[RMDB]
RNA sequence: GGGAACGACUCGAGUAGAGUCGAAAAUUCCUCCGUCCUCCUGCCCAAGGACGACGAGGAUUGCUCCAGGGCUGCUGGGUAGUUUACCGUCCCUUCUAUAGGCAUGGAGUUGGCACUGACAUCACAGCAUUAGCCCUCUAUUCGUAGAGGGCUAAUGAAAAGAAACAACAACAACAAC
Reactivity to 2A3 in 0.01 (KOAc 150mM, MgCl2 10mM, bicine 150mM(pH8.5), 24C), signal-to-noise 2, nucleotides 027 to 126: u020u000c000c000u010c000c040g020u030c010c000u000c010c030u020g030c000c020c010a030a020g030g010a020c040g010a020c050g000a020g030g020a010u010u110g030c030u010c050c000a020g010g140g040c040u110g050c020u020g030g030g000u020a040g030u010u070u080a100c000c010g040u050c010c010c000u040u000c050u060a170u090a050g050g000c020a050u100g040g000a050g020u080u110g050g020c040a020c020u040g050a040c020a070u080c060a020c030a060g000
Reactivity to DMS in 0.01 (KOAc 150mM, MgCl2 10mM, bicine 150mM(pH8.5), 24C), signal-to-noise 8, nucleotides 027 to 126: u000u000c000c000u000c070c070g020u000c030c050u000c020c020u000g000c020c020c050a260a040g010g020a020c220g010a070c090g010a050g010g000a030u000u000g010c070u000c010c030a090g010g000g010c060u000g010c070u000g010g010g020u000a030g020u000u010u000a110c090c030g000u010c030c010c030u000u000c110u010a120u000a110g010g020c070a050u010g020g010a090g010u000u000g020g020c070a090c060u000g010a070c090a070u000c080a070c140a110g000